[RMDB]
RNA sequence: GGGAACGACUCGAGUAGAGUCGAAAAACGUGCGAAAGCACGUUGGACGUCGUAGGAUAUGUAGGAUAUUCCUACAUGAGGAUCACCCAUGUUGUCAUGGAAGAAGGACAGAAGGACGAUGUCCAUACGUAUUUACCCAUUUCGAUGGGUAAAUACGAAAAGAAACAACAACAACAAC
Reactivity to DMS in 0.01 (KOAc 150mM, MgCl2 10mM, bicine 150mM(pH8.5), 24C), signal-to-noise 8, nucleotides 027 to 126: a030c000g020u000g010c000g000a120a080a200g010c000a000c000g010u000u000g010g010a030c000g020u000c000g020u000a050g030g010a130u010a010u010g000u000a010g000g010a210u010a220u000u010c000c010u000a010c000a010u010g010a110g000g000a120u000c070a170c130c010c010a040u010g010u010u000g010u010c020a020u000g000g010a140a090g010a140a120g010g000a040c050a090g000a100a150g000g010a040c010g000a030u000g010u010c010c000a070u000a070
Reactivity to 2A3 in 0.01 (KOAc 150mM, MgCl2 10mM, bicine 150mM(pH8.5), 24C), signal-to-noise 6, nucleotides 027 to 126: a000c000g000u010g000c010g070a120a000a010g000c010a000c010g000u000u030g000g000a000c000g010u010c000g010u000a030g050g090a100u040a000u180g010u000a020g020g030a060u040a190u300u180c000c010u000a000c000a000u010g040a040g090g050a090u060c020a060c020c010c010a020u090g150u190u240g220u220c010a010u030g010g020a050a080g040a090a080g190g020a010c030a050g080a070a030g100g010a000c010g000a010u020g000u000c000c000a000u060a030
Chemical mapping of a 177-nucleotide RNA with DMS and 2A3. 2A3 adducts were read by reverse transcription with SuperScript II with manganese. DMS adducts were read by reverse transcription with MarathonRT. It was measured as part of the RMDB library OK2TRN. The RNA was probed in 150 mM KOAc, 10 mM MgCl2 and 150 mM bicine (pH 8.5) at 24 C.